[RMDB]
RNA sequence: GGGAACGACUCGAGUAGAGUCGAAAAACAACAGAUAGCUGGAACCAGCGUAGAAUUCUACGCAUAUCCAUAGCGAAUGGUACCUGUAAAGAAAAUAAUGGUGGAUGUACAAGUACCAACAGCCGCUGAUGCCAUGGUGAUGUCAAUCACAUAUGCACACGCAGGCGUGAUUCGUCACGCCUGCGUGAAAAGAAACAACAACAACAAC
Reactivity to 2A3 in 0.01 (KOAc 150mM, MgCl2 10mM, bicine 150mM(pH8.5), 24C), signal-to-noise 1, nucleotides 027 to 156: a000c040a010a010c000a030g060a040u140a080g040c010u000g010g010a040a160c090c050a120g000c000g030u030a000g070a190a280u300u010c000u010a030c010g010c000a000u110a050u090c000c000a000u040a010g000c030g040a000a090u090g000g000u020a030c000c000u030g000u050a060a000a030g190a040a070a030a000u300a030a050u150g040g010u030g060g060a000u040g010u030a010c000a090a030g000u000a000c000c000a030a000c080a070g150c000c000g010c070u020g030a040u040g040c150c020a030u080g000g120u060g000a020u030g160u100c050a110a010u010c010a020c000a010u090a030u050g070c020a020